RNA sequence: GGGAACGACUCGAGUAGAGUCGAAAAGAUAUGGAGAAGGAUAACGCAUCGAUCUAUAAAAGUCUCGGAAACGAGUCGCUAUAGGGAGCGUUACUUCUCCUAAGUCAAACGGCCGUUCGCGGCCGAAGUCUAACGACAAGUUCGCUUGUCGUUAGACAAAAGAAACAACAACAACAAC
Reactivity to DMS in 0.01 (KOAc 150mM, MgCl2 10mM, bicine 150mM(pH8.5), 24C), signal-to-noise 2, nucleotides 027 to 126: g000a020u000a060u000g000g000a000g000a020a000g010g020a230u000a010a000c030g030c000a300u000c200g000a010u010c030u000a010u000a050a130a180a090g010u000c000u000c010g020g010a070a000a040c010g000a000g000u000c060g000c300u000a010u000a000g000g000g000a010g030c000g020u000u000a020c000u030u000c010u000c000c000u000a000a050g000u000c000a070a080a290c010g010g000c000c000g030u000u030c160g040c030g000g050c000c000g010a000a010
Reactivity to 2A3 in 0.01 (KOAc 150mM, MgCl2 10mM, bicine 150mM(pH8.5), 24C), signal-to-noise 2, nucleotides 027 to 126: g000a000u010a010u040g010g010a020g030a030a010g090g130a210u070a220a000c020g010c000a050u300c070g020a010u020c030u000a010u020a040a230a090a170g050u020c000u000c030g000g020a010a010a010c000g020a010g010u000c020g050c170u020a000u000a010g030g000g010a010g000c000g010u010u010a010c000u030u000c000u000c000c000u000a010a010g000u020c050a090a070a110c040g000g000c000c010g040u090u090c300g000c040g150g000c000c000g000a000a010

Structure probing data (DMS and 2A3) for a 177-nucleotide construct.
Values cover nucleotides 27 to 126.
The data come from the RNA Mapping Database (RMDB), library TTRDEL.
For 2A3 the reverse transcriptase was SuperScript II with manganese.
The RNA was probed in 150 mM KOAc, 10 mM MgCl2 and 150 mM bicine (pH 8.5) at 24 C.
For 2A3, 2,776 sequencing reads were counted.